An RNA of 207 nucleotides, treated with 2A3 and DMS and read out base by base. The RNA was probed in 150 mM KOAc, 10 mM MgCl2 and 150 mM bicine (pH 8.5) at 24 C. Reactivities are given for positions 27 through 156. For 2A3 the reverse transcriptase was SuperScript II with manganese. The 2A3 profile rests on 830 reads.
RNA sequence: GGGAACGACUCGAGUAGAGUCGAAAACAAAAAAUUGAAGAAAGGUACCGAAACAGUAUGUUGGCAAUAUUUAGCUGAAAUUAUCAAACAUUACGAAGGAAUACCAUUUUAUCAUCACACUCAUAGUAGUAAAUUUGGUGCGCUGGAUAAUACAAAGUGCUACAUUCUGAUUCGUCAGAAUGUAGCAAAAAGAAACAACAACAACAAC
Reactivity to 2A3 in 0.01 (KOAc 150mM, MgCl2 10mM, bicine 150mM(pH8.5), 24C), signal-to-noise 1, nucleotides 027 to 156: c030a000a040a040a000a010a050u220u240g010a100a050g070a050a090a010g030g000u000a010c100c030g030a060a110a000c050a010g070u090a050u070g000u110u050g040g080c080a050a080u000a090u180u180u020a050g000c020u050g040a080a090a000u230u100a060u100c060a100a030a030c020a040u050u240a040c080g050a020a000g000g050a040a050u040a040c000c000a000u000u000u000u070a090u070c060a050u070c010a040c020a010c040u140c020a050u070a060g180u020a010g000u080a050a060a150u050u020u090g020g000u020g020c020g000c010u010g050g070a020u010a070a020u160a080c130a010a110a020g000
Reactivity to DMS in 0.01 (KOAc 150mM, MgCl2 10mM, bicine 150mM(pH8.5), 24C), signal-to-noise 2, nucleotides 027 to 156: c030a000a060a120a070a080a130u020u000g010a090a090g020a100a120a040g000g050u000a130c030c030g010a100a070a090c090a090g030u010a060u010g040u000u010g000g020c030a000a000u010a080u010u000u010a120g030c040u000g000a090a050a030u000u010a050u000c050a110a100a040c060a070u000u000a100c090g000a120a120g010g000a110a090u010a040c050c030a090u000u000u000u000a070u010c050a040u010c060a110c060a000c060u010c080a050u000a070g010u010a050g000u000a050a040a060u030u000u000g020g010u000g010c120g060c030u000g000g010a050u020a030a080u000a080c080a060a000a160g020
Notes:
DMS adducts were read by reverse transcription with MarathonRT.